[RMDB]
RNA sequence: GGGAACGACUCGAGUAGAGUCGAAAAGAAGAGACCGCCACCAGGAGUCAGGGUUCAGACACGAUCCAAGAGAACACGGUAACACUGACUGUGCAGCGGAAGAGGCAAAGAGAGUGGCGGAAGAGAACCUAUAGGUCCUGUUCGCAGGACCUAUAGGAAAAGAAACAACAACAACAAC
Reactivity to 2A3 in 0.01 (KOAc 150mM, MgCl2 10mM, bicine 150mM(pH8.5), 24C), signal-to-noise 6, nucleotides 027 to 126: g140a040a020g090a010g050a040c000c020g000c000c000a000c010c000a040g040g090a010g070u010c000a000g000g020g020u010u030c030a040g040a110c050a030c150g020a040u030c020c020a190a040g110a010g010a090a010c110a010c060g030g000u040a010a000c010a000c020u010g010a010c000u070g090u070g130c040a040g040c020g100g040a020a020g070a050g050g000c050a040a090a000g150a030g010a020g030u000g000g000c020g010g000a010a000g020a000g000a000a020
Reactivity to DMS in 0.01 (KOAc 150mM, MgCl2 10mM, bicine 150mM(pH8.5), 24C), signal-to-noise 4, nucleotides 027 to 126: g000a100a080g010a160g010a120c000c000g030c000c000a000c000c030a240g010g010a040g000u000c010a020g000g000g020u010u010c220a140g010a080c160a090c050g010a140u020c040c050a100a140g000a170g000a060a040c130a130c050g000g010u020a030a020c010a010c030u000g000a050c000u000g020u020g020c020a100g000c020g000g030a080a080g000a090g020g000c020a060a130a110g010a110g000a120g030u000g000g030c010g000g010a040a030g000a140g000a110a160

Chemical mapping of a 177-nucleotide RNA with 2A3 and DMS. Values are in units of 0.01, from 0 to 300, in steps of 10. DMS adducts were read by reverse transcription with MarathonRT. It was measured as part of the RMDB library OK1LIB.